Background
An RNA of 177 nucleotides, treated with DMS and 2A3 and read out base by base. The data come from the RNA Mapping Database (RMDB), libraries RFM100 and RFMREP. Conditions: 150 mM KOAc, 10 mM MgCl2 and 150 mM bicine (pH 8.5), 24 C. High 2A3 reactivity points to a flexible backbone, as in loops and unpaired stretches. Values cover nucleotides 27 to 126. DMS adducts were read by reverse transcription with MarathonRT. DMS (dimethyl sulfate) methylates the pairing face of unpaired adenines and cytosines.
RNA sequence: GGGAACGACUCGAGUAGAGUCGAAAAGAGUGUGAGGGCAUAUAGCCCUCGCUUUUCUGUACCGUAAGGUGGUUCAGGAACAAGGACUGGGCAAGACCGGUGCCAGCCGCCGCGGUAAUACCGGCAGAACAUAUCUCAUCUUCGGAUGAGAUAUGUUAAAAGAAACAACAACAACAAC
Reactivity to DMS in 0.01 (KOAc 150mM, MgCl2 10mM, bicine 150mM(pH8.5), 24C), signal-to-noise 8, nucleotides 027 to 126: g000a020g020u000g010u000g020a010g020g010g020c000a230u030a100u050a180g000c000c000c000u000c000g000c000u000u010u020u000c010u000g010u000a050c010c000g000u010a080a110g030g020u010g000g020u000u010c140a160g000g010a080a060c180a100a110g010g000a110c020u000g000g010g030c110a090a080g000a180c010c010g000g010u000g000c010c010a070g020c010c010g010c010c000g000c030g000g000u000a040a060u010a140c030c010g010g000c140a130g010
Reactivity to 2A3 in 0.01 (KOAc 150mM, MgCl2 10mM, bicine 150mM(pH8.5), 24C), signal-to-noise 9, nucleotides 027 to 126: g030a010g020u080g030u040g010a000g010g030g010c050a040u280a050u190a300g000c000c000c000u000c000g000c000u060u010u050u000c010u010g020u030a010c000c000g010u050a050a120g030g050u050g010g020u050u110c120a100g080g030a090a080c050a140a130g040g030a010c020u060g010g050g040c110a100a030g050a110c000c010g010g020u050g080c010c010a010g000c010c000g000c000c010g000c020g000g000u010a030a020u090a090c020c030g040g000c070a030g030